RNA sequence: GGGAACGACUCGAGUAGAGUCGAAAAGUGAGAAAGGAGCUGCCAGCACUAAGGCGGACGGCGUAGUCGCGAUAGCAGCGUUCCGCUGUCGUCUCCACUGCAAGAACGUACGGUGUUGAGGCCCUGUCUAUUACUAGGGCUUCGGCCCUAGUAAUAGAAAAGAAACAACAACAACAAC
Reactivity to 2A3 in 0.01 (KOAc 150mM, MgCl2 10mM, bicine 150mM(pH8.5), 24C), signal-to-noise 2, nucleotides 027 to 126: g130u110g080a120g080a100a120a000g010g060a140g000c020u040g150c180c020a000g000c010a010c020u260a200a020g060g030c020g000g060a070c030g020g060c130g030u000a010g040u040c010g000c030g040a010u020a040g010c020a010g020c030g020u160u020c070c090g000c000u000g020u050c000g000u010c000u000c020c020a000c010u020g000c020a040a100g000a060a000c010g020u030a010c000g000g030u020g000u010u040g020a030g000g040c000c000c000u000g060u000
Reactivity to DMS in 0.01 (KOAc 150mM, MgCl2 10mM, bicine 150mM(pH8.5), 24C), signal-to-noise 2, nucleotides 027 to 126: g010u010g000a050g000a040a110a060g040g020a090g030c030u000g000c130c020a060g010c020a030c030u010a100a180g020g000c000g000g010a150c060g000g000c140g010u010a050g010u020c180g000c070g000a050u000a050g010c050a120g010c030g000u010u030c080c050g000c010u000g030u000c040g000u000c040u000c080c110a010c040u000g000c030a060a150g000a060a110c030g010u020a040c090g000g000u010g000u000u010g010a300g000g000c010c000c010u010g010u010
This 177-nucleotide RNA was probed chemically with 2A3 and DMS. In probing experiments dimethyl sulfate is read out at A N1 and C N3, which are open when not base-paired. For 2A3 the reverse transcriptase was SuperScript II with manganese. The data come from the RNA Mapping Database (RMDB), library VIROID. The 2A3 profile rests on 1,903 reads. The DMS profile rests on 1,460 reads.